The data come from the RNA Mapping Database (RMDB), library 15KLIB. The record gives the reactivity of an RNA of 170 nucleotides to DMS and 2A3. The RNA was probed in 150 mM KOAc, 10 mM MgCl2 and 150 mM bicine (pH 8.5) at 24 C. DMS adducts were read by reverse transcription with MarathonRT. The 2A3 profile rests on 5,399 reads. Reactivities are rounded to 0.1 and cut off at 0 and 3.
RNA sequence: GGGAACGACUCGAGUAGAGUCGAAAAUAAGGAUGGCGACGAUGGUUACUUCCUUCCUUAUCCAGACCCUUCAAGAAUUUUGUCUGCCGGUUGCUUUGUAGAUGAUAUCGUUAAGACUGACGGUACAAUGCCUCUUGCUUCGGCAAGAGGAAAAGAAACAACAACAACAAC
Reactivity to DMS in 0.01 (KOAc 150mM, MgCl2 10mM, bicine 150mM(pH8.5), 24C), signal-to-noise 4, nucleotides 027 to 129: u060a030a070g000g000a080u040g000g050c300g000a070c020g040a090u040g000g000u050u000a080c080u010u060c050c050u000u000c000c060u010u010a010u000c080c070a080g070a110c000c040c040u000u000c180a070a060g050a160a070u010u010u020u040g020u000c010u050g020c070c020g030g050u030u020g030c020u040u000u010g030u050a060g010a100u050g030a130u000a030u070c030g020u000u000a110a080g050a150c150u050g000a050c020g030g030u020a000c070a000a000u070g000
Reactivity to 2A3 in 0.01 (KOAc 150mM, MgCl2 10mM, bicine 150mM(pH8.5), 24C), signal-to-noise 5, nucleotides 027 to 129: u050a000a000g030g000a010u040g020g000c020g040a040c060g090a100u140g110g090u080u120a060c020u070u030c010c000u020u010c000c000u070u050a050u050c040c030a040g090a130c010c000c030u050u090c030a080a110g100a150a120u100u100u030u070g060u080c020u040g040c040c020g010g000u070u060g050c050u100u080u080g060u110a010g000a090u080g020a050u060a040u000c040g010u120u030a080a030g140a190c080u060g010a000c000g000g020u070a000c000a030a000u100g020